[RMDB]
RNA sequence: GGGAACGACUCGAGUAGAGUCGAAAAGACGCCGUUCACAGACUAGACGGCGGUGGGUCUUUUCAAACGGAAAGGGCUUAAGAUAUAGUCGGGCCUCUUCGGAGACGAAGAGGGACGUCAUUGCCUUUUACCUUUGGUUCACAAGGAAGAAGGGCAGGAGAUGUCCCUAGUUCGCUAGGGACAUCUCAAAAGAAACAACAACAACAAC
Reactivity to 2A3 in 0.01 (KOAc 150mM, MgCl2 10mM, bicine 150mM(pH8.5), 24C), signal-to-noise 1, nucleotides 027 to 156: g040a010c040g010c040c020g010u030u030c150a150c030a190g060a050c020u030a000g010a000c020g000g000c000g000g040u060g000g000g000u020c000u010u020u000u010c150a180a230a080c130g130g000a000a020a000g020g000g010c030u040u030a050a050g070a040u150a040u020a130g010u010c000g020g070g010c000c000u000c010u000u000c000g020g000a020g000a070c010g000a010a000g000a000g000g020g020a040c020g060u080c050a160u040u150g000c000c010u000u020u020u030a140c000c000u010u040u100g110g000u250u180c110a110c010a150a000g000g000a060a090g000a010a030g000g000g000c000a020g000
An RNA of 207 nucleotides, treated with 2A3 and read out base by base. Conditions: 150 mM KOAc, 10 mM MgCl2 and 150 mM bicine (pH 8.5), 24 C.